Structure probing data (2A3 and DMS) for a 177-nucleotide construct. The data come from the RNA Mapping Database (RMDB), library M2PK50. DMS adducts were read by reverse transcription with MarathonRT. For 2A3, 7,287 sequencing reads were counted. For 2A3 the reverse transcriptase was SuperScript II with manganese. The reactions ran in a buffer of 150 mM KOAc, 10 mM MgCl2 and 150 mM bicine (pH 8.5), at 24 C.

[RMDB]
RNA sequence: GGGAACGACUCGAGUAGAGUCGAAAAGUCCGUUCCUUCGGGAACGGACAAAGGGAAACGAAGCAGUAGGUUCGUGUACCUACAGCAAAAAUAAACACGAAAAAAGCCCUCUGUUCGCAGAGGGCAACGCAUUUAUGAAGUUCGCUUCAUAAAUGCGAAAAGAAACAACAACAACAAC
Reactivity to 2A3 in 0.01 (KOAc 150mM, MgCl2 10mM, bicine 150mM(pH8.5), 24C), signal-to-noise 3, nucleotides 027 to 126: g010u000c010c010g010u010u000c010c000u030u030c130g090g000g010a000a000c000g010g000a010c010a000a000a000g010g000g010a040a040a060c050g040a090a020g090c110a020g010u010a000g020g010u020u020c010g000u020g010u040a030c010c000u010a010c040a030g110c030a000a060a000a070a030u140a030a050a000c010a000c030g000a110a030a010a000a000a000g000c010c000c000u010c010u010g050u040u070c230g020c040a000g000a000g000g000g000c000a000a000
Reactivity to DMS in 0.01 (KOAc 150mM, MgCl2 10mM, bicine 150mM(pH8.5), 24C), signal-to-noise 2, nucleotides 027 to 126: g010u000c000c000g010u000u000c000c000u010u020c260g020g000g000a000a000c000g000g000a000c010a000a040a060g020g010g000a070a030a070c110g000a090a080g000c100a120g000u000a000g010g010u010u000c010g030u000g000u000a040c000c010u010a000c000a150g000c110a000a040a020a010a020u010a010a030a020c010a000c000g030a000a080a060a090a080a130g000c000c000c000u020c000u000g010u010u010c190g020c000a010g000a020g000g000g000c000a000a010